The data come from the RNA Mapping Database (RMDB), library TTRDES. Chemical mapping of a 177-nucleotide RNA with 2A3 and DMS. The reactions ran in a buffer of 150 mM KOAc, 10 mM MgCl2 and 150 mM bicine (pH 8.5), at 24 C. DMS adducts were read by reverse transcription with MarathonRT. In probing experiments dimethyl sulfate is read out at A N1 and C N3, which are open when not base-paired.
RNA sequence: GGGAACGACUCGAGUAGAGUCGAAAAGAUAUGGAUCACAUAAACGCAACAGCUAUCAUCUCGGAAACGAGAUAUAGACAUGCGUGUGUGAUCCUAAGUCAAAGGAUUUUGGUUCGCCAAAAUCCAAGCCGUCAAAUAACUUCGGUUAUUUGACGGCAAAAGAAACAACAACAACAAC
Reactivity to 2A3 in 0.01 (KOAc 150mM, MgCl2 10mM, bicine 150mM(pH8.5), 24C), signal-to-noise 2, nucleotides 027 to 126: g000a000u000a000u050g000g020a000u020c000a000c020a000u140a100a300a140c070g000c060a300a300c140a300g010c000u000a010u010c090a020u020c100u010c000g020g000a020a010a010c000g010a000g030a030u010a000u000a010g040a040c100a230u300g000c000g000u030g010u000g010u000g000a000u020c000c010u010a010a030g000u000c000a080a170a090g000g010a010u060u000u000u010g030g000u040u060c200g190c090c020a010a000a000a000u010c000c010a000a000
Reactivity to DMS in 0.01 (KOAc 150mM, MgCl2 10mM, bicine 150mM(pH8.5), 24C), signal-to-noise 1, nucleotides 027 to 126: g000a000u000a020u020g000g010a000u000c000a010c000a040u000a070a230a120c020g100c000a130a070c300a080g000c020u000a000u000c230a010u000c000u000c000g000g000a010a000a040c000g010a010g010a010u010a000u000a000g010a030c010a250u020g020c000g000u010g010u000g010u000g010a020u000c000c010u000a010a070g000u000c010a080a150a130g010g010a020u000u000u020u000g000g000u010u020c230g050c010c000a000a000a000a000u000c000c000a050a030